[RMDB]
RNA sequence: GGGAACGACUCGAGUAGAGUCGAAAACGCAACAAGUUCGGAGCCAAGAAGACGGUCGUCGACGGCGUCGUGUUCGACAGCAAGCGCGAGGCCGAAGUCUAUGGCGAUCUGAAGCUUCUCGAGAUCGCUGGCCGGAUCUCCGGAUUCGAGCGCCAGCGCUUCCUCAACUAUUCGUAGUUGAGGAAGCAAAAGAAACAACAACAACAAC
Reactivity to 2A3 in 0.01 (KOAc 150mM, MgCl2 10mM, bicine 150mM(pH8.5), 24C), signal-to-noise 4, nucleotides 027 to 156: c060g010c050a030a070c030a180a010g040u040u020c010g020g000a000g030c030c020a070a030g060a040a010g080a050c020g000g010u020c040g080u010c020g040a070c010g020g020c050g060u010c010g000u030g110u140u150c060g080a070c050a110g080c070a140a050g030c050g000c010g050a000g050g000c010c010g040a040a010g040u020c030u060a200u160g000g000c000g010a020u000c020u020g050a060a030g060c020u130u010c070u050c050g050a050g010a100u090c030g000c010u010g010g000c010c000g020g000a040u010c010u000c030c120g060g000a010u010u010c030g020a030g060c080g010c050c010a030g000c010
Reactivity to DMS in 0.01 (KOAc 150mM, MgCl2 10mM, bicine 150mM(pH8.5), 24C), signal-to-noise 2, nucleotides 027 to 156: c060g020c020a110a110c090a060a050g010u000u000c030g000g000a100g020c010c020a080a130g000a060a090g020a270c050g020g010u000c010g030u010c000g040a240c000g010g000c000g020u000c020g000u000g000u010u000c020g010a200c100a180g030c050a060a080g020c030g020c000g000a170g010g030c010c000g000a030a130g000u000c050u000a100u000g060g000c020g000a030u000c030u030g010a080a080g030c030u000u000c030u000c030g020a130g010a070u000c040g010c010u000g010g010c050c060g020g000a030u000c010u010c140c180g010g000a030u000u000c000g010a210g010c080g000c010c000a050g000c070